The record gives the reactivity of an RNA of 177 nucleotides to DMS and 2A3. The DMS profile rests on 3,247 reads. Source: RMDB library OK2TRN, as collected in RNAgym. For DMS the reverse transcriptase was MarathonRT. Conditions: 150 mM KOAc, 10 mM MgCl2 and 150 mM bicine (pH 8.5), 24 C.
[RMDB]
RNA sequence: GGGAACGACUCGAGUAGAGUCGAAAAAGCGGCAUCGCCGAGAUCGUUGGCAACGAAGACGGCAAGGUAUCAGAGGUGGUGCUGGUAGAUGACACGCGUCUGCCUUGCGAUCUGCUGAUCUUGGGCAGGUCCGGUAAAUAUUCGUAUUUACCGGACCAAAAGAAACAACAACAACAAC
Reactivity to DMS in 0.01 (KOAc 150mM, MgCl2 10mM, bicine 150mM(pH8.5), 24C), signal-to-noise 3, nucleotides 027 to 126: a120g010c030g010g010c030a080u010c080g020c010c010g020a250g010a040u000c020g010u000u000g020g010c070a140a100c120g010a140a080g000a090c130g000g020c010a060a030g010g010u010a040u000c040a070g010a300g020g000u000g020g020u000g010c010u000g010g020u010a060g000a110u000g000a080c110a060c140g020c090g000u010c030u000g000c000c010u000u010g000c070g020a020u010c020u000g020c120u000g010a030u010c010u000u000g010g010g000c030a090
Reactivity to 2A3 in 0.01 (KOAc 150mM, MgCl2 10mM, bicine 150mM(pH8.5), 24C), signal-to-noise 3, nucleotides 027 to 126: a010g120c050g020g000c030a030u040c040g000c010c010g020a020g000a040u020c050g140u060u070g110g030c030a060a030c070g150a080a060g130a050c060g030g030c030a030a000g040g000u150a030u130c030a020g030a020g070g080u110g020g020u020g000c010u010g000g000u040a040g010a130u090g030a020c040a000c170g090c030g090u000c010u020g010c000c000u010u060g020c050g030a060u010c020u090g070c070u110g050a050u000c010u030u020g000g020g000c040a030